[RMDB]
RNA sequence: GGGAACGACUCGAGUAGAGUCGAAAAGUGGGGGGAGAGAAAGUCAUAGGGAGCUUAACCUCAACAGGAUGAAGGCGCCAUAAUUAGGGUCAGGCGGUUGGCUCAGCCUGCGGAAAUCCCCAGCUUAGUAGGGAUGGGGAGUGGCACUGCAGCCUGACUCGAGUAAUAUCUUCGGAUAUUACUCGAGAAAAGAAACAACAACAACAAC
Reactivity to 2A3 in 0.01 (KOAc 150mM, MgCl2 10mM, bicine 150mM(pH8.5), 24C), signal-to-noise 1, nucleotides 027 to 156: g070u120g000g050g000g000g010g010a030g000a000g000a000a080a000g030u070c020a050u170a010g000g000g050a030g010c000u060u050a090a050c010c010u040c050a050a090c030a020g120g010a070u090g000a140a030g080g030c070g000c060c020a050u100a080a060u160u100a030g110g030g000u040c030a020g010g000c010g000g050u110u060g030g000c030u000c020a050g000c000c010u000g000c020g000g040a010a090a050u020c000c000c000c000a030g000c010u060u060a050g050u060a040g070g040g040a050u000g020g000g020g010a040g010u040g050g010c050a010c060u030g050c000a020g000c000c010u030g000a040

Chemical mapping of a 207-nucleotide RNA with 2A3. 2A3 adducts were read by reverse transcription with SuperScript II with manganese. Values cover nucleotides 27 to 156.